Background: Source: RMDB library OK1LIB, as collected in RNAgym. Chemical mapping of a 177-nucleotide RNA with 2A3 and DMS. Values cover nucleotides 27 to 126.
RNA sequence: GGGAACGACUCGAGUAGAGUCGAAAAGAUCACACCUGUAGGUCGCGGCGGAGUUUGGCGACGUGCCCGGUCGCCUUCACGUUGUACUGGGCGACGGCGAUCUUGCCGUUUUCGUCGACCACGAACGCACCUACUAAAUGUUCGCAUUUAGUAGGUGAAAAGAAACAACAACAACAAC
Reactivity to 2A3 in 0.01 (KOAc 150mM, MgCl2 10mM, bicine 150mM(pH8.5), 24C), signal-to-noise 9, nucleotides 027 to 126: g080a080u150c060a020c020a030c100c030u070g050u110a070g020g020u010c030g000c010g040g000c010g000g020a130g060u050u090u110g070g000c010g010a020c010g010u050g020c000c000c010g010g010u000c010g000c000c000u030u090c060a070c050g060u070u120g060u110a050c050u050g020g010g010c010g010a010c000g000g010c020g070a160u090c040u050u170g010c000c000g010u050u030u040u050c020g020u020c010g010a070c000c010a040c040g030a050a010c070g000
Reactivity to DMS in 0.01 (KOAc 150mM, MgCl2 10mM, bicine 150mM(pH8.5), 24C), signal-to-noise 7, nucleotides 027 to 126: g010a070u030c100a110c120a100c070c030u010g010u020a060g010g010u000c040g010c050g000g010c040g000g010a110g010u020u020u010g000g010c000g010a020c040g020u020g020c030c010c030g000g010u000c020g000c030c070u020u010c150a090c180g000u000u010g010u030a060c080u010g000g010g010c010g000a020c000g000g010c010g020a070u040c120u040u040g000c010c010g010u000u010u010u020c030g020u000c010g000a070c020c030a080c090g010a090a090c190g000

The RNA was probed in 150 mM KOAc, 10 mM MgCl2 and 150 mM bicine (pH 8.5) at 24 C. DMS adducts were read by reverse transcription with MarathonRT.